This 207-nucleotide RNA was probed chemically with 2A3. The reactions ran in a buffer of 150 mM KOAc, 10 mM MgCl2 and 150 mM bicine (pH 8.5), at 24 C. It was measured as part of the RMDB library OK3TST. For 2A3 the reverse transcriptase was SuperScript II with manganese.
RNA sequence: GGGAACGACUCGAGUAGAGUCGAAAAAUGUGGCUCGUCGGCCGCUACGACUGCGGCUACGCGGGACCGCCACGCGGACGCGACCUAUGGUGGAUCCCCACCCAGUACGUCGAGGGAAUCGCCACAUCCCUCGUCGCCGACUUCGACCAGCGGUUCGUAGUCUGACCUAAUUCGUUAGGUCAGACUAAAAAGAAACAACAACAACAAC
Reactivity to 2A3 in 0.01 (KOAc 150mM, MgCl2 10mM, bicine 150mM(pH8.5), 24C), signal-to-noise 1, nucleotides 027 to 156: a020u080g020u020g000g000c010u020c060g070u000c040g000g020c000c000g000c030u100a090c130g300a060c210u170g000c010g010g000c000u000a050c080g000c040g000g010g000a000c000c000g010c000c000a030c000g000c120g140g100a100c120g010c060g090a030c010c120u180a100u140g000g000u000g020g010a300u040c000c000c020c020a060c000c000c000a020g000u230a090c010g010u030c000g040a000g000g010g000a000a030u090c060g000c000c010a010c010a010u030c000c000c000u000c000g000u000c000g020c010c010g200a300c030u150u190c080g120a110c010c080a000g000c020g020g000u110u100c040g010